Structure probing data (DMS and 2A3) for a 177-nucleotide construct.
Conditions: 150 mM KOAc, 10 mM MgCl2 and 150 mM bicine (pH 8.5), 24 C.
The 2A3 profile rests on 1,685 reads.
[RMDB]
RNA sequence: GGGAACGACUCGAGUAGAGUCGAAAAAAUAGAGAUACCGUUAGUAAAGGCGAUCGAAAGCGGUAGAGGGCAAACCGAAUCUUUUCUGUAAAGAAAUAGAUAUGUGGAGUACGGAUCUUUCUCAAUGCGACGUAUCUAUCUUCGGAUAGAUACGUCGAAAAGAAACAACAACAACAAC
Reactivity to DMS in 0.01 (KOAc 150mM, MgCl2 10mM, bicine 150mM(pH8.5), 24C), signal-to-noise 2, nucleotides 027 to 126: a020a100u020a090g000a070g010a140u000a070c000c000g000u030u000a120g020u020a020a080a070g050g010c070g030a100u020c040g000a100a150a200g020c000g020g010u000a030g010a070g010g000g010c050a010a080a130c060c020g010a100a060u000c020u000u000u000u000c000u000g000u040a080a090a000g000a000a010a030u030a020g010a010u010a050u020g010u010g010g000a060g030u010a070c060g000g000a100u000c020u010u010u000c010u000c010a110a090u010g020
Reactivity to 2A3 in 0.01 (KOAc 150mM, MgCl2 10mM, bicine 150mM(pH8.5), 24C), signal-to-noise 3, nucleotides 027 to 126: a000a030u170a020g040a000g010a010u060a040c020c000g030u060u090a070g000u020a000a090a100g060g130c160g050a030u020c000g050a080a010a000g020c030g010g000u050a040g070a050g080g000g040c070a050a080a030c030c010g040a000a000u000c000u000u000u010u000c000u020g060u090a160a170a060g020a000a030a000u230a030g010a000u130a090u220g070u110g020g010a040g050u050a000c030g030g050a030u030c010u010u030u010c020u000c010a040a080u090g020

For DMS the reverse transcriptase was MarathonRT.